[RMDB]
RNA sequence: GGGAACGACUCGAGUAGAGUCGAAAAGGAGCUCGAUGUUAGAUGGUCCCGUAACCCAAUGGGACCACCACUUUACGUUAGUAGAGUGGUAUCAACAUAGGGUUAUGUUGAUAUCUAACAUCGAGGAGAUAGGAUACAUAUUCGUGUGUGUUCUAUCAAAAGAAACAACAACAACAAC
Reactivity to DMS in 0.01 (KOAc 150mM, MgCl2 10mM, bicine 150mM(pH8.5), 24C), signal-to-noise 7, nucleotides 027 to 126: g010g010a100g020c000u000c000g000a010u000g010u000u000a000g000a000u000g000g000u000c000c010c000g010u000a090a110c010c010c010a110a030u000g000g000g000a010c010c000a010c000c000a000c000u000u000u000a000c000g020u040u070a100g010u000a000g000a000g010u000g000g020u000a000u000c000a010a000c000a010u000a020g020g040g020u060u000a010u000g000u000u000g000a010u000a000u000c000u000a000a010c000a000u000c000g000a010g010g010a070
Reactivity to 2A3 in 0.01 (KOAc 150mM, MgCl2 10mM, bicine 150mM(pH8.5), 24C), signal-to-noise 9, nucleotides 027 to 126: g180g020a100g090c000u000c000g000a000u000g000u000u000a000g000a000u000g000g000u000c010c000c000g010u040a110a110c000c010c000a000a010u040g000g000g000a000c000c000a000c000c000a000c000u010u000u010a010c020g220u100u270a080g000u020a000g000a000g000u000g000g000u000a000u000c000a000a000c000a000u030a020g300g050g070u250u030a040u000g000u000u000g000a000u000a000u000c000u000a000a000c000a000u000c000g000a000g000g000a010